[RMDB]
RNA sequence: GGGAACGACUCGAGUAGAGUCGAAAAUAGAUCCAUGCUGUCCUAGUGAUGUCGAUCUGCUCCAAGACAUCCUUUUGACUAGGCUCUUUUGAGCGACAGCCGCGGAGCAGAUUUUGGAUCUAGAAAAGGGAGGCAGCUAGUUCGCUAGCUGUUUCCCAAAAGAAACAACAACAACAAC
Reactivity to 2A3 in 0.01 (KOAc 150mM, MgCl2 10mM, bicine 150mM(pH8.5), 24C), signal-to-noise 9, nucleotides 027 to 126: u040a000g000a000u000c000c000a020u080g010c010u030g010u030c010c030u030a030g020u030g120a040u030g040u060c030g020a040u010c020u030g000c000u000c010c010a070a020g030a020c020a070u100c000c020u060u120u110u190g100a110c080u070a090g050g050c000u010c000u030u250u110u290g020a020g000c010g020a030c030a020g020c030c030g040c060g020g000a010g000c020a000g000a010u110u120u030u050g010g000a000u000c000u000a020g080a020a110a010a020
Reactivity to DMS in 0.01 (KOAc 150mM, MgCl2 10mM, bicine 150mM(pH8.5), 24C), signal-to-noise 9, nucleotides 027 to 126: u000a010g000a000u000c000c000a070u020g010c020u000g000u000c010c040u030a100g010u040g010a020u000g000u010c030g000a050u000c000u000g000c000u000c000c010a110a270g010a060c080a070u020c070c080u000u020u020u030g010a100c110u020a130g010g010c040u000c010u010u020u020u040g010a020g010c030g010a120c070a040g010c030c110g010c300g000g000a010g000c000a010g000a040u000u010u020u010g000g000a010u000c000u000a010g000a040a050a100a110